[RMDB]
RNA sequence: GGGAACGACUCGAGUAGAGUCGAAAAUCUGGGUCAUUUUCGGCGAGGACCGCUUUCGCUGGAGAUCGGCCUGUCGCUUGCGGUAUUCGGAAUCUUGCACGCCCUCGCUCAAGCCUUCGUCACUCCAUCGAUAAUGACAUUUCGAUGUCAUUAUCGAAAAAGAAACAACAACAACAAC
Reactivity to DMS in 0.01 (KOAc 150mM, MgCl2 10mM, bicine 150mM(pH8.5), 24C), signal-to-noise 5, nucleotides 027 to 126: u010c060u010g000g010g020u010c020a030u000u000u000u000c020g000g000c020g010a060g020g010a200c170c280g000c060u010u000u000c030g010c030u010g010g010a040g000a020u000c120g010g000c010c020u010g010u010c080g000c060u000u000g010c040g000g020u000a080u000u010c080g010g000a110a080u000c060u000u000g020c050a080c090g000c040c010c010u000c050g000c050u000c060a080a130g010c040c030u000u000c060g000u010c070a100c050u000c020c060a150
Reactivity to 2A3 in 0.01 (KOAc 150mM, MgCl2 10mM, bicine 150mM(pH8.5), 24C), signal-to-noise 6, nucleotides 027 to 126: u030c030u100g050g000g000u020c020a030u010u010u020u050c020g010g000c010g000a020g030g050a130c050c070g110c150u150u220u050c020g000c030u010g010g010a020g010a040u070c100g030g000c000c010u030g070u040c070g020c040u040u070g020c030g020g030u070a150u040u130c010g030g070a070a070u040c020u050u130g010c040a010c060g010c030c000c000u020c020g020c020u030c030a050a050g000c010c010u040u050c020g030u030c010a030c090u020c030c010a070

The data come from the RNA Mapping Database (RMDB), library OK2TRN.
Structure probing data (DMS and 2A3) for a 177-nucleotide construct.
The reactions ran in a buffer of 150 mM KOAc, 10 mM MgCl2 and 150 mM bicine (pH 8.5), at 24 C.